This 177-nucleotide RNA was probed chemically with DMS and 2A3. For DMS the reverse transcriptase was MarathonRT. 2A3 adducts were read by reverse transcription with SuperScript II with manganese. The RNA was probed in 150 mM KOAc, 10 mM MgCl2 and 150 mM bicine (pH 8.5) at 24 C. In probing experiments dimethyl sulfate is read out at A N1 and C N3, which are open when not base-paired.
RNA sequence: GGGAACGACUCGAGUAGAGUCGAAAAUCACAAAACCCAACCACAAGUUCGGUUGGUGCGUCUGUCCGGGUCGGGGCGCGUAAGCCGCCCAACCUCAUCCCGUUCCCUCGCGGAACAGGGAGUGUUAGAUAUAUCAGAGCUUCGGCUCUGAUAUAUCAAAAGAAACAACAACAACAAC
Reactivity to DMS in 0.01 (KOAc 150mM, MgCl2 10mM, bicine 150mM(pH8.5), 24C), signal-to-noise 2, nucleotides 027 to 126: u000c160a090c130a070a010a090a200c110c000c000a020a000c000c010a060c110a170a110g000u010u000c170g030g010u000u000g000g000u000g000c060g000u000c040u000g000u000c040c060g050g010g020u000c060g080g020g020g050c030g000c010g010u020a100a130g020c180c020g020c000c000c010a170a070c020c010u010c040a120u010c000c000c000g000u000u000c000c010c000u010c300g000c160g010g010a020a000c000a040g010g000g020a030g010u000g000u000u010a080
Reactivity to 2A3 in 0.01 (KOAc 150mM, MgCl2 10mM, bicine 150mM(pH8.5), 24C), signal-to-noise 1, nucleotides 027 to 126: u060c010a000c010a060a030a000a030c000c000c000a020a010c000c000a010c050a210a100g080u150u070c030g050g000u000u010g030g040u050g010c000g070u010c040u040g150u060c010c040g040g000g000u030c080g050g000g000g030c000g090c010g070u160a160a000g030c030c000g020c000c040c000a010a040c000c010u030c020a120u010c000c000c000g000u000u010c040c000c000u070c100g070c230g020g000a040a010c000a150g010g040g000a030g000u090g030u030u170a050